Chemical mapping of a 177-nucleotide RNA with 2A3. The RNA was probed in 150 mM KOAc, 10 mM MgCl2 and 150 mM bicine (pH 8.5) at 24 C.
RNA sequence: GGGAACGACUCGAGUAGAGUCGAAAAUGUCAGGUGUAUGACGAAUAACUUGUCCAUCGGCUGGCUGAUUGAUUUGCAUGCACCGCUGAUUGACACACGGCAUCGAUAUCCACAUCUCAGCAUCAAAGGUGCACGCUCCUUUCGAGGAGCGUGCACCAAAAGAAACAACAACAACAAC
Reactivity to 2A3 in 0.01 (KOAc 150mM, MgCl2 10mM, bicine 150mM(pH8.5), 24C), signal-to-noise 1, nucleotides 027 to 126: u140g000u000c000a010g000g000u000g000u000a000u110g020a000c000g000a030a030u170a110a000c000u070u300g090u210c000c000a060u060c000g060g000c080u090g000g000c000u000g000a260u070u050g000a080u120u180u250g000c070a000u130g140c040a050c040c040g000c180u000g020a000u000u140g180a000c030a000c000a000c170g070g000c000a000u000c000g030a020u080a050u060c000c000a000c000a070u000c090u000c000a010g000c100a020u000c090a060a080a060